[RMDB]
RNA sequence: GGGAACGACUCGAGUAGAGUCGAAAAAUAAAAAGCGUUCGCAGGCACAUCUUUAGGAGUUACUACAGGGUGUAGCUUGGCGUAUUCCUUCUUUGCCUCCUCUACCAGCUUCAAUUUCUCCUCGUACGCAUGAGGAGUCGUUCGCGACUCCUCAUGCAAAAGAAACAACAACAACAAC
Reactivity to 2A3 in 0.01 (KOAc 150mM, MgCl2 10mM, bicine 150mM(pH8.5), 24C), signal-to-noise 2, nucleotides 027 to 126: a020u280a000a090a030a030a010g040c010g010u100u150c110g000c070a000g000g000c020a020c000a020u000c010u080u060u030a020g040g040a090g160u210u190a210c010u000a000c060a010g000g050g000u000g020u030a080g020c000u040u060g060g040c020g000u020a040u010u040c020c000u030u070c080u000u020u070g040c030c030u070c030c010u020c020u050a050c010c000a030g030c060u000u040c040a020a210u070u010u030c030u000c000c000u000c050g080u080a070c170